[RMDB]
RNA sequence: GGGAACGACUCGAGUAGAGUCGAAAAGCACAACAAGUUGCAACUGCAGAACAAUCAUCUAAACAAUCUAACGAGCCAUAUGUGUUAGCAGUAACUGCUUGUCCAACAGGUAUUGCACAUACGUACACACGCCGCUAAGGUUCGCCUUAGCGGCGUGAAAAGAAACAACAACAACAAC
Reactivity to 2A3 in 0.01 (KOAc 150mM, MgCl2 10mM, bicine 150mM(pH8.5), 24C), signal-to-noise 2, nucleotides 027 to 126: g000c000a040c010a070a190c000a120a050g080u080u070g050c060a150a100c000u040g010c020a020g020a130a000c080a000a040u050c020a000u090c020u150a000a260a050c000a190a000u210c030u230a120a000c050g070a000g170c080c030a060u110a150u130g120u010g000u080u030a050g000c000a000g010u070a020a010c020u000g050c020u070u110g000u000c000c060a040a000c030a010g000g040u010a000u010u050g020c020a000c010a080u130a030c050g060u100a010c010a000
Reactivity to DMS in 0.01 (KOAc 150mM, MgCl2 10mM, bicine 150mM(pH8.5), 24C), signal-to-noise 1, nucleotides 027 to 126: g000c060a050c130a190a130c000a100a060g000u060u000g000c150a070a110c040u040g100c000a090g000a050a120c160a130a050u000c020a030u000c080u000a010a000a000c190a020a000u050c120u040a010a120c000g000a080g000c020c020a200u000a000u060g050u000g000u000u010a000g040c080a000g000u000a070a000c000u000g000c060u000u000g000u000c000c060a020a020c000a010g060g040u010a020u000u020g000c070a140c000a050u000a070c070g010u010a030c260a120
Chemical mapping of a 177-nucleotide RNA with 2A3 and DMS. The RNA was probed in 150 mM KOAc, 10 mM MgCl2 and 150 mM bicine (pH 8.5) at 24 C. For 2A3, 542 sequencing reads were counted. Values cover nucleotides 27 to 126. Source: RMDB library OK1LIB, as collected in RNAgym. For 2A3 the reverse transcriptase was SuperScript II with manganese.